[RMDB]
RNA sequence: GGGAACGACUCGAGUAGAGUCGAAAACAUAUGACGGAGAGUGGAACACUCAGCCGAAACGCAUCCAAUGUCUGAAGUCUUUAAUGGGUAUAACAGUCAGUUGACCCAGAUCCCAACAGACAAUAAAACUACCCUUGAUCUUCGGAUCAAGGGUAGUAAAAGAAACAACAACAACAAC
Reactivity to 2A3 in 0.01 (KOAc 150mM, MgCl2 10mM, bicine 150mM(pH8.5), 24C), signal-to-noise 2, nucleotides 027 to 126: c020a070u190a030u230g140a000c010g050g000a000g000a010g070u080g010g180a160a050c010a010c110u020c000a060g060c030c020g070a170a010a020c070g010c020a050u000c040c050a100a110u030g020u000c000u000g060a130a030g010u010c010u070u010u010a120a040u050g020g000g010u050a120u080a300a000c000a050g270u170c040a040g000u090u040g030a000c000c030c000a000g000a000u010c040c000c030a010a000c000a020g000a000c000a050a040u210a030a040a000
Reactivity to DMS in 0.01 (KOAc 150mM, MgCl2 10mM, bicine 150mM(pH8.5), 24C), signal-to-noise 2, nucleotides 027 to 126: c010a100u000a170u000g000a160c060g030g030a230g000a030g030u010g000g030a140a190c070a060c030u010c020a120g020c030c040g000a030a100a080c120g000c060a140u020c060c070a090a160u030g000u000c010u000g000a130a180g000u000c050u000u000u000a160a210u050g000g030g000u020a080u000a040a000c030a110g000u000c220a010g060u010u010g000a020c020c010c010a040g000a110u000c010c010c000a080a130c030a010g000a040c050a070a060u000a010a060a010
Record summary: Structure probing data (2A3 and DMS) for a 177-nucleotide construct. DMS adducts were read by reverse transcription with MarathonRT. Conditions: 150 mM KOAc, 10 mM MgCl2 and 150 mM bicine (pH 8.5), 24 C. Values cover nucleotides 27 to 126. The 2A3 profile rests on 1,184 reads.